[RMDB]
RNA sequence: GGGAACGACUCGAGUAGAGUCGAAAACAACUUGGAGAGCCUCAGCCAAAUCCUGGGGAGGGUUUAGGCAUCCAAAUGGGUAGCAAUAGCUCCGUCCCUUUGGAGAGACGGUCCAGAGACCGGGCCAGUUACUAGAUAAGUUCGCUUAUCUAGUAACAAAAGAAACAACAACAACAAC
Reactivity to 2A3 in 0.01 (KOAc 150mM, MgCl2 10mM, bicine 150mM(pH8.5), 24C), signal-to-noise 6, nucleotides 027 to 126: c010a020a020c040u040u070g020g010a060g010a030g060c000c000u010c030a000g010c000c010a120a230a120u060c030c030u120g030g030g080g060a040g020g010g010u010u040u060a050g010g000c000a010u000c000c000a050a040a070u160g020g000g050u090a050g010c040a130a300u030a200g010c020u020c030c030g100u070c010c000c000u050u070u050g060g000a090g000a010g030a040c040g010g020u000c010c030a070g080a000g010a170c030c040g010g020g030c010c000a010
Reactivity to DMS in 0.01 (KOAc 150mM, MgCl2 10mM, bicine 150mM(pH8.5), 24C), signal-to-noise 5, nucleotides 027 to 126: c110a080a080c080u000u010g000g000a050g020a170g020c010c020u000c060a090g010c010c010a070a080a080u000c030c010u000g010g010g000g020a160g000g000g010u000u000u000a080g020g020c020a300u000c000c010a010a030a050u000g010g000g020u010a080g030c050a100a100u010a090g010c030u000c220c120g010u000c020c010c010u000u000u000g010g010a050g000a060g000a060c040g010g010u000c010c050a090g000a090g000a150c030c040g010g000g010c040c060a120